The record gives the reactivity of an RNA of 207 nucleotides to DMS and 2A3.
[RMDB]
RNA sequence: GGGAACGACUCGAGUAGAGUCGAAAAUGCUGAACUUCUAGAGAUUGUGCAACCUCUCUUACACAAUCAGGAGCUUGGUAACCUUGUUUGCACUCUCAUUCCAAGGAUUUCAGACUUGCUUUGCCAAUCUUGUUGCAGCUCAUCAAUUCUUGGCAGAGUAAUCGAGCUGAUUCGUCAGCUCGAUUACAAAAGAAACAACAACAACAAC
Reactivity to DMS in 0.01 (KOAc 150mM, MgCl2 10mM, bicine 150mM(pH8.5), 24C), signal-to-noise 1, nucleotides 027 to 156: u010g030c020u010g010a030a010c060u010u000c000u000a260g040a250g000a030u010u020g030u020g030c030a020a010c060c160u010c140u000c030u020u000a030c030a060c010a030a050u000c020a040g000g040a090g040c140u010u000g020g050u000a030a130c060c010u010u020g000u000u000u000g040c000a040c070u000c030u010c020a150u000u070c070c040a100a120g000g010a070u000u010u010c010a090g020a110c050u010u000g010c050u000u000u010g000c000c030a040a110u020c070u010u010g020u010u000g030c030a200g000c120u020c060a060u000c040a030a110u000u000c020u010u000g000g000c020a100g010a150
Reactivity to 2A3 in 0.01 (KOAc 150mM, MgCl2 10mM, bicine 150mM(pH8.5), 24C), signal-to-noise 2, nucleotides 027 to 156: u150g010c000u020g000a030a030c040u030u040c010u060a040g000a000g010a180u100u090g020u000g020c000a040a040c060c030u070c000u040c010u060u130a040c070a000c030a100a140u080c030a010g040g010a030g020c080u100u060g060g000u090a070a110c040c000u050u110g130u110u070u070g000c020a030c040u030c010u000c000a100u110u010c000c030a020a050g060g000a080u000u070u080c020a030g030a090c040u070u050g030c020u050u060u070g040c030c020a100a140u070c070u050u170g040u080u120g000c040a040g000c080u070c050a060u060c040a020a070u030u010c020u060u020g020g000c000a000g020a000
The reactions ran in a buffer of 150 mM KOAc, 10 mM MgCl2 and 150 mM bicine (pH 8.5), at 24 C.